[RMDB]
RNA sequence: GGGAACGACUCGAGUAGAGUCGAAAAUGUUCUCUGCGAAAUACACAACUUACUACAAACUGAUCUUAUUUGAAUUGAGGGUUACUGUAGCUACUACUGUAGCUACCGUAAUCCUCACAGUGUGAACAGGAGGAUAUUAUUUCGAUAAUAUCCUCCUAAAAGAAACAACAACAACAAC
Reactivity to DMS in 0.01 (KOAc 150mM, MgCl2 10mM, bicine 150mM(pH8.5), 24C), signal-to-noise 9, nucleotides 027 to 126: u040g010u000u000c010u000c000u020g010c100g000a090a100a060u010a070c070a050c080a080a080c100u010u010a080c110u010a110c100a050a090a080c060u000g000a120u010c080u000u010a100u010u020u000g010a090a140u020u010g000a010g010g010g000u000u000a000c000u000g010u000a000g000c000u000a000c000u010a120c300u020g010u000a000g000c000u000a000c000c050g010u000a000a000u000c000c000u000c000a000c060a020g010u010g010u010g000a100a110c220
Reactivity to 2A3 in 0.01 (KOAc 150mM, MgCl2 10mM, bicine 150mM(pH8.5), 24C), signal-to-noise 9, nucleotides 027 to 126: u190g010u010u010c020u010c020u030g050c050g090a070a070a050u230a030c060a010c020a120a130c050u140u180a050c050u090a050c060a060a170a030c040u060g060a100u090c050u100u230a240u180u220u170g180a230a150u090u070g000a000g000g010g000u010u000a000c000u000g000u000a000g000c000u000a000c000u030a060c060u090g000u010a000g000c000u000a000c000c000g000u000a000a000u000c000c000u000c000a000c000a000g000u010g010u010g050a070a030c020
This 177-nucleotide RNA was probed chemically with DMS and 2A3.
For 2A3 the reverse transcriptase was SuperScript II with manganese.